[RMDB]
RNA sequence: GGGAACGACUCGAGUAGAGUCGAAAACGUGUCCGUCGGCGUAGCCGACAACAUGCCCAGGUAGCCCAGACCUUCAAGGCUACGGCGCGUUGCGACGCACGGUCUGAUUCUUCACAACGACGUUCACAAGAUCGGAUCACUUUCGAGUGAUCCGAAAUCAAAGAUUGGUGUUCGCACCAAUCUUUGAAAAAGAAACAACAACAACAAC
Reactivity to 2A3 in 0.01 (KOAc 150mM, MgCl2 10mM, bicine 150mM(pH8.5), 24C), signal-to-noise 3, nucleotides 027 to 156: c020g010u030g000u030c100c080g010u000c010g020g000c130g120u110a170g010c000c000g050a000c010a000a000c020a050u090g000c020c000c010a010g050g000u040a060g020c020c090c150a040g040a040c020c000u050u070c090a070a040g000g000c000u010a020c000g000g010c040g020c030g040u080u140g090c080g050a050c010g010c000a010c030g000g000u030c030u040g030a080u070u060c040u100u090c090a050c040a170a080c070g110a030c030g060u040u070c060a060c020a160a070g050a200u030c000g000g000a000u000c000a000c000u060u080u140c260g070a020g000u000g000a000u000c010c010g000a010a000a020
Reactivity to DMS in 0.01 (KOAc 150mM, MgCl2 10mM, bicine 150mM(pH8.5), 24C), signal-to-noise 2, nucleotides 027 to 156: c080g060u000g000u000c040c070g020u000c030g040g030c000g060u000a150g030c010c000g000a050c030a040a010c040a040u000g050c010c060c060a090g020g000u000a030g000c040c040c140a110g010a070c080c050u010u000c090a170a190g000g000c000u000a030c010g010g020c010g000c030g040u000u010g020c020g050a040c060g000c010a050c040g010g000u010c020u010g010a190u020u000c070u000u000c030a140c040a050a150c020g000a090c030g010u000u000c010a140c030a100a180g010a100u000c000g030g020a020u000c010a000c010u010u000u010c180g000a050g030u020g000a000u000c000c000g000a000a010a070